[RMDB]
RNA sequence: GGGAACGACUCGAGUAGAGUCGAAAAAGGAAACGGACGCAGACAAGGACGACGACGAGGACUCCGAUGAUGAGGCGCCCAAGACGAAGAAGGUGAAGGAGACGGUGUGGGACUGGGACCUGCUCAACCUCACAUUAUUGUUCGCAAUAAUGUGAGGAAAAGAAACAACAACAACAAC
Reactivity to 2A3 in 0.01 (KOAc 150mM, MgCl2 10mM, bicine 150mM(pH8.5), 24C), signal-to-noise 3, nucleotides 027 to 126: a000g110g000a060a050a010c020g020g020a010c040g000c040a010g050a130c030a040a060g020g010a010c030g020a000c040g000a010c070g020a030g010g030a030c020u000c010c030g040a030u060g020a020u050g050a020g050g000c020g020c000c000c000a010a020g040a020c060g040a030a060g040a040a020g030g020u070g040a070a010g040g010a060g010a020c050g030g040u090g030u100g080g020g010a030c050u040g040g020g020a030c000c010u040g010c010u010c040a050a090
Reactivity to DMS in 0.01 (KOAc 150mM, MgCl2 10mM, bicine 150mM(pH8.5), 24C), signal-to-noise 5, nucleotides 027 to 126: a050g010g010a050a090a110c090g000g020a080c090g020c060a090g000a090c080a090a110g010g020a050c090g020a160c060g000a080c130g010a130g000g020a250c190u000c020c030g020a120u010g010a100u000g010a130g010g010c060g020c040c020c050a070a080g000a070c070g010a080a060g000a060a060g000g030u000g010a080a080g020g000a080g010a090c090g020g000u010g020u010g000g000g010a070c110u010g000g000g010a070c060c040u000g000c020u000c060a070a160